This 177-nucleotide RNA was probed chemically with 2A3 and DMS. It was measured as part of the RMDB library OK2TST. For 2A3, 974 sequencing reads were counted. Values are in units of 0.01, from 0 to 300, in steps of 10. For 2A3 the reverse transcriptase was SuperScript II with manganese.

[RMDB]
RNA sequence: GGGAACGACUCGAGUAGAGUCGAAAAGACAGCACCGGCGAAGAGGUGUAGAGAUGCGAAUCACUAUGUGGACAGCAAUCUUUGGAAAGCUCUUGCUGUCAAAUCCGUCACGAACCUAUGCUUAGCGCGCCCUCUUGUAAUUCGUUACAAGAGGGCGAAAAGAAACAACAACAACAAC
Reactivity to 2A3 in 0.01 (KOAc 150mM, MgCl2 10mM, bicine 150mM(pH8.5), 24C), signal-to-noise 1, nucleotides 027 to 126: g060a010c020a040g020c000a010c040c080g070g000c040g000a100a050g040a010g100g040u040g000u050a020g010a000g000a000u060g040c050g110a030a030u100c000a020c100u090a070u210g040u040g060g000a010c000a000g020c000a020a190u300c010u030u030u200g160g070a290a050a030g000c000u000c000u010u010g000c030u000g000u030c020a010a000a000u000c000c010g040u000c000a000c040g040a020a030c000c030u070a070u180g000c040u040u110a030g070c030g000
Reactivity to DMS in 0.01 (KOAc 150mM, MgCl2 10mM, bicine 150mM(pH8.5), 24C), signal-to-noise 2, nucleotides 027 to 126: g010a080c090a070g000c040a060c050c040g010g000c060g000a100a090g010a070g020g020u010g000u000a060g010a050g000a030u000g010c170g000a160a130u020c070a050c040u000a080u000g010u000g000g000a040c040a030g010c000a030a020u000c050u010u010u010g000g020a120a070a060g010c010u010c010u000u000g000c010u000g000u000c010a020a090a070u010c040c030g020u020c050a070c040g000a100a080c040c040u000a050u000g020c040u000u010a100g010c150g010
For DMS the reverse transcriptase was MarathonRT. For DMS, 1,511 sequencing reads were counted. The RNA was probed in 150 mM KOAc, 10 mM MgCl2 and 150 mM bicine (pH 8.5) at 24 C.